[RMDB]
RNA sequence: GGGAACGACUCGAGUAGAGUCGAAAAAAAAGAAAGAAAUUAGCUCGCCAGUUAGCGAGGUCUGUCCCCACACGACAGAUAAUCGGGUGCAACUCCCGCCCCUUUUCCGAGGGUCAUCGGAACCAAAAAAACUCAGGCAACUUCGGUUGCCUGAGAACAACUAUCUCACGUUCGCGUGAGAUAGUUGAAAAGAAACAACAACAACAAC
Reactivity to 2A3 in 0.01 (KOAc 150mM, MgCl2 10mM, bicine 150mM(pH8.5), 24C), signal-to-noise 2, nucleotides 027 to 156: a000a020a000a070g160a060a080a020g040a050a100a060u140u070a070g030c000u030c020g010c040c030a190g140u150u160a010g000c000g000a000g000g000u010c000u010g000u020c030c020c070c010a050c000a000c080g010a000c000a010g010a010u070a030a080u090c020g000g010g000u020g000c010a000a000c040u000c010c000c000g000c000c000c000c000u130u170u010u000c000c000g000a000g010g000g020u060c030a010u000c000g020g000a000a030c020c020a050a090a030a000a060a040a040c000u000c010a000g000g000c000a000a010c010u080u150c170g090g010u000u000g000c000c000u000g000a000g000a000a000

This 207-nucleotide RNA was probed chemically with 2A3. Conditions: 150 mM KOAc, 10 mM MgCl2 and 150 mM bicine (pH 8.5), 24 C. Source: RMDB library M2RFPK, as collected in RNAgym.